[RMDB]
RNA sequence: GGGAACGACUCGAGUAGAGUCGAAAAAUCUUCUACAAUUCCAAUGAUUACUUGUACUGCUUUUUCCAUAACAUCAAUGGAUGCAUAUUCAUAUGGGCCGUGGAAGUUACCGCAACCUGUAAAGAUGCGUGUUACGCGCUUUCGAGCGCGUAACACGAAAAGAAACAACAACAACAAC
Reactivity to 2A3 in 0.01 (KOAc 150mM, MgCl2 10mM, bicine 150mM(pH8.5), 24C), signal-to-noise 2, nucleotides 027 to 126: a010u000c000u000u000c000u000a000c030a080a280u140u000c000c040a000a000u000g070a030u080u080a150c260u220u070g030u070a090c150u120g240c000u140u030u050u170u000c010c010a000u030a260a120c030a260u140c160a200a000u010g000g000a020u050g020c000a030u040a010u050u020c060a000u270a100u060g010g010g000c030c120g000u000g000g000a000a000g000u070u110a000c030c000g030c040a180a060c060c060u180g000u230a060a000a000g060a040u300g140
Record summary:
Structure probing data (2A3) for a 177-nucleotide construct. Conditions: 150 mM KOAc, 10 mM MgCl2 and 150 mM bicine (pH 8.5), 24 C. The 2A3 profile rests on 366 reads. 2A3 adducts were read by reverse transcription with SuperScript II with manganese. Values are in units of 0.01, from 0 to 300, in steps of 10.